RNA sequence: GGGAACGACUCGAGUAGAGUCGAAAAGAUAUGGAGCAAUCGGGAGCUUGCAUUUCGGAAACGAAAUGUCAAGCGAGGAUCGAGUUGCUCCUAAGUCAAAAUCUGUGGGAGUUCGCUCCCACAGAAAUCUACCUAUAAUCUUCGGAUUAUAGGUAGAAAAAGAAACAACAACAACAAC
Reactivity to 2A3 in 0.01 (KOAc 150mM, MgCl2 10mM, bicine 150mM(pH8.5), 24C), signal-to-noise 2, nucleotides 027 to 126: g000a000u000a000u030g000g010a010g020c000a020a020u000c000g000g010g020a010g000c010u000u000g010c000a000u000u010u000c000g000g030a000a000a010c010g020a000a030a010u080g120u240c070a010a000g000c010g000a040g000g000a000u010c000g000a100g290u040u010g010c000u000c000c000u000a000a000g010u000c000a020a020a010a300u020c000u000g010u000g000g000g000a020g020u030u060c120g070c080u000c000c000c000a000c000a000g010a000a000a000
Reactivity to DMS in 0.01 (KOAc 150mM, MgCl2 10mM, bicine 150mM(pH8.5), 24C), signal-to-noise 2, nucleotides 027 to 126: g000a010u000a020u010g000g000a020g010c000a020a020u000c000g000g000g010a030g030c000u000u000g010c000a000u000u000u000c000g020g010a020a000a020c000g010a000a010a000u000g000u010c040a000a000g020c010g010a050g010g000a010u020c000g000a030g010u000u000g010c000u000c000c000u000a000a070g000u000c010a120a100a120a120u000c000u000g020u000g010g000g010a020g010u000u010c250g010c010u000c000c000c000a000c000a000g000a010a060a070